[RMDB]
This 177-nucleotide RNA was probed chemically with 2A3 and DMS. The DMS profile rests on 4,906 reads. For 2A3, 4,788 sequencing reads were counted.

RNA sequence: GGGAACGACUCGAGUAGAGUCGAAAACGGACGGUGAGUGCGGGUCCGCCUGCGCCGCCGAGCAACUGCACGCCGGCGGCGACGAGGUUGUCUCGACGUAGGGCGUGCCGACUUUCCAAGGGGACACGGGAAUCUUACUAUUCGUAGUAAGAUUCCCAAAAGAAACAACAACAACAAC
Reactivity to 2A3 in 0.01 (KOAc 150mM, MgCl2 10mM, bicine 150mM(pH8.5), 24C), signal-to-noise 4, nucleotides 027 to 126: c020g050g080a010c030g030g100u090g030a190g040u300g300c090g010g060g020u010c020c080g000c020c040u030g000c010g000c000c000g020c010c000g030a030g000c020a060a090c070u230g030c210a010c140g010c000c000g030g000c000g030g000c000g000a010c000g070a010g000g090u200u180g080u100c010u000c000g070a070c050g050u120a100g040g060g080c000g010u020g070c000c000g020a050c020u030u020u020c010c000a040a050g000g000g000g020a010c010a030c170
Reactivity to DMS in 0.01 (KOAc 150mM, MgCl2 10mM, bicine 150mM(pH8.5), 24C), signal-to-noise 4, nucleotides 027 to 126: c090g000g000a080c110g010g020u010g000a140g010u000g010c030g000g000g010u000c190c070g020c020c010u000g010c010g020c010c000g010c010c000g010a080g010c030a100a100c130u000g000c200a090c110g020c010c010g000g010c030g010g010c020g000a040c030g000a040g010g020u010u020g000u010c020u000c010g010a060c100g000u000a160g000g000g020c020g010u010g020c010c010g010a090c090u010u000u000c020c020a120a140g010g010g000g000a150c190a090c210